[RMDB]
RNA sequence: GGGAACGACUCGAGUAGAGUCGAAAAAUUUUUCUGAUAAAACUCGUCCAGAGACCCUGUCUCUCGAUGACUAUCUCAAACUAUUUGAACUUCUCUCAUUGCACGCCUAAGUGCAUCUCAGGCUAUACUCAUUAUUUAAUUUCGAUUAAAUAAUGAGAAAAGAAACAACAACAACAAC
Reactivity to 2A3 in 0.01 (KOAc 150mM, MgCl2 10mM, bicine 150mM(pH8.5), 24C), signal-to-noise 2, nucleotides 027 to 126: a000u070u090u000u020u050c060u040g030a020u050a080a160a100a130c010u000c010g000u000c030c030a010g000a000g000a050c270c060c230u140g010u020c000u020c000u000c020g000a010u010g000a000c000u000a020u010c030u010c030a060a070a030c040u040a090u030u020u050g060a090a050c050u080u040c010u000c000u010c050a130u100u140g000c030a020c040g050c010c070u120a180a000g000u010g030c010a030u010c040u020c020a050g080g000c010u040a020u080a180
Reactivity to DMS in 0.01 (KOAc 150mM, MgCl2 10mM, bicine 150mM(pH8.5), 24C), signal-to-noise 4, nucleotides 027 to 126: a060u000u010u010u010u000c050u000g000a010u010a040a100a170a160c270u000c000g010u000c010c090a010g010a030g000a010c010c280c240u020g010u000c000u000c000u000c300g000a000u000g000a050c090u010a080u000c040u000c050a030a030a030c140u000a020u000u000u000g010a090a110c180u000u000c020u000c000u010c120a110u010u000g020c060a040c070g000c130c110u000a050a080g020u000g000c100a040u010c060u010c080a040g010g010c060u000a140u000a140

About this RNA:
Conditions: 150 mM KOAc, 10 mM MgCl2 and 150 mM bicine (pH 8.5), 24 C. Chemical mapping of a 177-nucleotide RNA with 2A3 and DMS. The DMS profile rests on 2,147 reads. High 2A3 reactivity points to a flexible backbone, as in loops and unpaired stretches.